RNA sequence: GGGAACGACUCGAGUAGAGUCGAAAACUACGAAAAGAUCGAAAGUAGGAAAGAAAGAUCGAAAGAAAGUGCACGAAACGACGAAAGUGUGGAAAAGAAAAGUGCACGAAACACACGAAAGUCGGAAGGGAUACCAUAUCUUCGGAUAUGGUAUCCCAAAAGAAACAACAACAACAAC
Reactivity to 2A3 in 0.01 (KOAc 150mM, MgCl2 10mM, bicine 150mM(pH8.5), 24C), signal-to-noise 2, nucleotides 027 to 126: c010u020a040c000g150a010a120a060a050g020a030u050c030g060a070a110a120g070u150a120g150g200a050a010a100g210a000a040a080g070a060u000c110g090a010a120a000g100a010a100a010g030u030g000c000a010c000g200a000a180a000c000g070a000c000g010a060a000a140g040u000g010u060g080g160a000a300a140a080g120a030a050a110a000g090u060g020c060a000c040g000a060a120a000c000a000c000a000c010g060a090a100a000g000u010c000g000g000a020a150
Reactivity to DMS in 0.01 (KOAc 150mM, MgCl2 10mM, bicine 150mM(pH8.5), 24C), signal-to-noise 1, nucleotides 027 to 126: c000u000a010c140g000a150a030a220a070g010a080u000c040g000a120a150a060g000u070a000g000g010a260a080a100g000a080a070a160g000a000u000c030g130a250a060a040g000a130a070a220g000u000g000c030a040c100g040a010a070a160c030g000a000c000g060a060a080a190g000u020g000u000g000g000a040a050a020a140g010a000a120a000a010g000u000g000c060a000c000g000a000a100a120c000a000c000a000c000g000a020a070a170g000u000c000g000g060a060a140